[RMDB]
RNA sequence: GGGAACGACUCGAGUAGAGUCGAAAAGAUAUGGAAAUUACUGUACGAGCUGCACAUCGGAAACGAUGUGGCAGCGAUGAGUAUUAAUUUCCUAAGUCAAAACCGAUACCCCUUCGGGGGUAUCGGAGUAACCUUACAAGUUCGCUUGUAAGGUUACAAAAGAAACAACAACAACAAC
Reactivity to 2A3 in 0.01 (KOAc 150mM, MgCl2 10mM, bicine 150mM(pH8.5), 24C), signal-to-noise 3, nucleotides 027 to 126: g000a000u010a000u040g000g040a020a010a020u020u010a040c150u190g020u090a010c030g050a080g040c000u010g010c010a000c000a010u000c000g010g000a010a010a000c010g000a000u010g030u040g120g000c010a000g020c000g000a010u050g010a000g000u010a010u050u030a010a020u000u000u030c000c000u000a000a000g000u010c000a030a020a120a050c010c000g000a000u000a010c010c010c030c060u010u130c300g140g000g010g000g000u010a000u000c000g010g000a010
Reactivity to DMS in 0.01 (KOAc 150mM, MgCl2 10mM, bicine 150mM(pH8.5), 24C), signal-to-noise 4, nucleotides 027 to 126: g000a010u000a010u020g000g000a020a000a010u000u010a010c300u010g010u000a010c000g010a030g020c000u000g010c010a030c010a000u010c000g020g000a010a010a020c000g010a010u000g010u000g020g030c000a010g010c000g010a040u000g010a040g010u000a010u000u000a000a020u000u000u010c000c000u010a000a160g000u010c000a130a070a120a190c000c000g000a010u000a000c000c010c000c000u010u010c200g040g030g010g000g010u000a000u000c000g010g000a040